An RNA of 207 nucleotides, treated with 2A3 and read out base by base. High 2A3 reactivity points to a flexible backbone, as in loops and unpaired stretches. The 2A3 profile rests on 654 reads. The reactions ran in a buffer of 150 mM KOAc, 10 mM MgCl2 and 150 mM bicine (pH 8.5), at 24 C.

RNA sequence: GGGAACGACUCGAGUAGAGUCGAAAAGCAUUUAGCCUUCGCGCUCCAGCUUCCGCUCGUAAGACGGGGAUAACGCGGAGUCAAACCAAAACGAGAUCGUGUGGAAGCCACCGUUUGAGGAUCGAAGCACUAAAUUGAAUCAAACUAGCUUAAGUUUAAUCCUAUGUGGCUUCGGCCACAUAGGAUUAAAAGAAACAACAACAACAAC
Reactivity to 2A3 in 0.01 (KOAc 150mM, MgCl2 10mM, bicine 150mM(pH8.5), 24C), signal-to-noise 1, nucleotides 027 to 156: g000c010a030u070u140u240a040g020c020c000u000u000c020g000c010g000c000u000c010c000a120g000c040u080u000c000c000g010c030u000c010g040u090a030a030g050a090c000g030g000g010g000a040u040a110a070c030g020c040g010g010a000g000u040c040a010a150a140c050c000a080a010a060a080c050g000a000g000a060u060c040g040u020g010u040g110g030a010a000g000c020c000a010c000c100g000u020u010u130g030a040g000g000a000u090c030g010a010a000g010c000a000c050u090a040a070a070u190u190g050a000a000u050c010a020a050a020c010u070a040g090c010u070u180a090a010g050u150u010u010